RNA sequence: GGGAACGACUCGAGUAGAGUCGAAAAGCAGCAACAGCCGCAGAGCGCCUGCAGUCGGUGCUGCCGUCCGUGGCAGAGGCGGCCACUGCAGCCGUCCAGGCGCUGCAGCAACCGGGUGCUGCACGUGCCCAGUUACUUAGUUCGCUAAGUAACUGGGAAAAGAAACAACAACAACAAC
Reactivity to DMS in 0.01 (KOAc 150mM, MgCl2 10mM, bicine 150mM(pH8.5), 24C), signal-to-noise 5, nucleotides 027 to 126: g010c010a010g000c010a050a050c030a120g000c030c050g010c030a110g010a100g030c030g010c050c000u000g010c100a160g010u010c070g010g030u000g000c050u010g020c000c030g010u010c080c120g020u010g010g020c080a070g020a120g010g010c020g000g000c020c150a040c110u010g000c060a080g020c020c010g010u000c050c020a030g000g000c020g020c020u000g000c040a080g010c020a060a110c110c100g000g010g020u000g000c010u000g010c000a070c180g010u000g000
Reactivity to 2A3 in 0.01 (KOAc 150mM, MgCl2 10mM, bicine 150mM(pH8.5), 24C), signal-to-noise 4, nucleotides 027 to 126: g000c000a000g000c010a000a010c010a050g040c010c020g000c020a040g030a030g170c010g010c000c000u010g010c030a040g100u060c030g040g020u070g030c030u030g000c000c010g040u050c020c020g080u190g150g020c120a050g000a120g150g000c000g010g010c010c050a100c080u090g000c020a050g100c000c000g000u000c010c000a000g000g000c000g000c000u010g000c020a010g000c010a030a050c070c050g240g000g070u020g000c000u020g010c010a010c050g080u090g050
Structure probing data (DMS and 2A3) for a 177-nucleotide construct. It was measured as part of the RMDB library OK2TRN. As a SHAPE reagent, 2A3 marks flexible, mostly unpaired nucleotides at the ribose 2'-OH.